This 177-nucleotide RNA was probed chemically with DMS and 2A3. As a SHAPE reagent, 2A3 marks flexible, mostly unpaired nucleotides at the ribose 2'-OH. Conditions: 150 mM KOAc, 10 mM MgCl2 and 150 mM bicine (pH 8.5), 24 C.
[RMDB]
RNA sequence: GGGAACGACUCGAGUAGAGUCGAAAAGAAAGCAGACGGAAGCGAGCCCCUGGGAAGGCACGCAAGAAUUGUCUGGCUCUUUUCGUUUCGCAAGCGGCAUGACGUGGCGCCCCAACCACGCCGUGAACACGCAGAAUAUCUUCGGAUAUUCUGCGUGAAAAGAAACAACAACAACAAC
Reactivity to DMS in 0.01 (KOAc 150mM, MgCl2 10mM, bicine 150mM(pH8.5), 24C), signal-to-noise 2, nucleotides 027 to 126: g000a090a040a140g000c000a030g000a050c000g010g020a110a180g000c050g000a050g050c030c000c020c000u030g010g000g000a140a130g000g010c000a040c000g000c010a110a130g010a110a120u020u030g040u020c000u000g000g000c000u000c000u000u000u000u000c030g000u000u000u000c030g020c140a040a170g010c040g010g030c210a100u050g000a220c120g030u010g000g000c000g000c040c020c000c010a160a250c000c000a000c030g000c000c000g000u020g010a060a160
Reactivity to 2A3 in 0.01 (KOAc 150mM, MgCl2 10mM, bicine 150mM(pH8.5), 24C), signal-to-noise 5, nucleotides 027 to 126: g040a010a050a010g040c000a000g010a010c020g110g090a080a020g000c020g010a020g000c000c000c000c030u110g110g120g050a070a070g020g000c010a000c010g010c020a070a070g130a150a180u200u130g000u000c000u000g030g020c010u010c000u030u020u010u070c060g000u000u000u030c080g000c040a080a030g020c000g030g000c050a040u180g060a090c130g010u000g000g000c020g170c000c000c000c000a000a040c000c000a000c020g000c000c000g000u000g010a010a020